[RMDB]
RNA sequence: GGGAACGACUCGAGUAGAGUCGAAAAGAGAACCCAACCUACAUUUACCACUCCGCAUUCAUUGAGUGUGGAAGUUGUGGUAAUGAUUCCUGGCUUACAGGGAAUGCUAUCCAAGGGUUUGCCUGUGUACGUCGCGGCUUCGGCCGCGACAAAAGAAACAACAACAACAAC
Reactivity to DMS in 0.01 (KOAc 150mM, MgCl2 10mM, bicine 150mM(pH8.5), 24C), signal-to-noise 3, nucleotides 027 to 129: g030a190g010a100a090c030c000c010a200a170c110c040u020a110c120a080u030u010u000a010c030c000a030c030u030c010c150g040c000a040u000u020c000a240u010u100g010a020g070u000g020u020g030g000a070a150g020u060u040g000u000g040g010u030a010a070u040g000a130u060u000c070c020u020g020g000c270u050u030a000c060a170g050g040g020a110a020u030g040c110u050a060u010c070c180a040a130g050g000g010u000u010u020g000c060c050u030g000u030g010u030a060c080
Reactivity to 2A3 in 0.01 (KOAc 150mM, MgCl2 10mM, bicine 150mM(pH8.5), 24C), signal-to-noise 2, nucleotides 027 to 129: g050a000g000a030a020c000c010c000a000a090c050c010u150a090c010a060u000u020u080a000c030c000a020c000u000c000c000g040c000a020u000u010c000a040u120u250g000a000g010u000g000u020g000g020a040a080g190u140u110g040u000g000g000u000a000a020u040g010a010u050u030c000c000u010g010g020c050u020u060a030c020a000g010g030g000a060a020u230g040c010u100a080u090c040c000a080a070g040g010g000u020u020u030g040c000c000u030g010u010g000u030a020c070